Overview: An RNA of 177 nucleotides, treated with 2A3 and DMS and read out base by base. For 2A3 the reverse transcriptase was SuperScript II with manganese. For DMS the reverse transcriptase was MarathonRT. As a SHAPE reagent, 2A3 marks flexible, mostly unpaired nucleotides at the ribose 2'-OH. The RNA was probed in 150 mM KOAc, 10 mM MgCl2 and 150 mM bicine (pH 8.5) at 24 C.

[RMDB]
RNA sequence: GGGAACGACUCGAGUAGAGUCGAAAACUAUGGACUAACUAGACAAUAAGUUGAUCCGAAACAGUUGUUUGUGAUUGGUUAGGAUUUACAAUAAACCCACAAUGAACAAUUGUGUAAGUCACAACGCCGUUGUCUUAUUCUUCGGAAUAAGACAACGAAAAGAAACAACAACAACAAC
Reactivity to 2A3 in 0.01 (KOAc 150mM, MgCl2 10mM, bicine 150mM(pH8.5), 24C), signal-to-noise 3, nucleotides 027 to 126: c020u020a100u250g010g000a020c010u040a050a010c000u010a040g100a200c100a130a260u200a270a030g020u040u020g020a070u000c020c010g030a070a060a000c050a040g040u100u050g070u080u200u090g030u010g020a070u040u050g020g020u030u010a020g080g000a120u140u080u090a050c040a030a150u150a120a020a020c020c000c000a000c020a000a020u070g010a150a000c050a140a000u020u000g000u010g010u070a080a040g010u000c000a010c000a090a040c030g040c010
Reactivity to DMS in 0.01 (KOAc 150mM, MgCl2 10mM, bicine 150mM(pH8.5), 24C), signal-to-noise 4, nucleotides 027 to 126: c030u010a070u030g010g020a030c020u000a000a020c000u000a120g030a150c260a120a130u030a050a080g000u000u000g010a030u000c010c010g010a140a100a080c220a120g000u000u010g020u010u000u010g030u000g010a070u000u000g000g010u010u010a140g010g020a100u010u000u000a050c170a060a090u010a030a060a040c040c000c010a040c010a020a000u000g020a110a060c220a060a030u000u000g010u000g020u000a040a050g000u000c010a040c030a020a030c070g000c190